[RMDB]
RNA sequence: GGGAACGACUCGAGUAGAGUCGAAAAGAUAUGGAGGUGCUAGGAGUCUUGGACCUCGGAAACGAGCUAGACUUACUAGCAAGCCUCCUAAGUCAAACACUCAUUAGGGUUCGCCCUAAUGAGUGAACAAAGCAAUCAGCUUCGGCUGAUUGCUUUGAAAAGAAACAACAACAACAAC
Reactivity to 2A3 in 0.01 (KOAc 150mM, MgCl2 10mM, bicine 150mM(pH8.5), 24C), signal-to-noise 1, nucleotides 027 to 126: g020a020u050a020u120g030g000a010g010g060u100g020c000u000a000g020g000a020g050u050c000u080u140g170g140a270c030c000u000c000g000g000a080a070a030c030g010a030g090c000u020a010g030a000c020u030u160a300c010u030a020g000c030a010a000g020c000c010u000c010c000u050a060a020g050u010c050a140a090a000c020a000c010u010c000a020u010u000a010g000g000g100u060u080c290g230c000c000c000u030a030a000u010g000a010g010u000g000a000a030
Reactivity to DMS in 0.01 (KOAc 150mM, MgCl2 10mM, bicine 150mM(pH8.5), 24C), signal-to-noise 2, nucleotides 027 to 126: g020a050u010a300u010g030g000a020g020g020u000g010c000u000a000g000g000a020g000u000c000u030u010g020g020a120c300c010u000c000g000g000a090a070a180c000g000a000g020c030u000a020g020a050c010u000u010a070c000u000a000g020c040a010a050g000c020c000u020c000c010u000a010a060g000u000c050a090a130a200c000a000c000u000c000a010u000u000a000g010g010g010u010u000c240g010c010c000c000u010a000a000u000g000a000g000u010g000a040a170
An RNA of 177 nucleotides, treated with 2A3 and DMS and read out base by base. DMS (dimethyl sulfate) methylates the pairing face of unpaired adenines and cytosines. The reactions ran in a buffer of 150 mM KOAc, 10 mM MgCl2 and 150 mM bicine (pH 8.5), at 24 C. Values cover nucleotides 27 to 126. For 2A3, 1,406 sequencing reads were counted.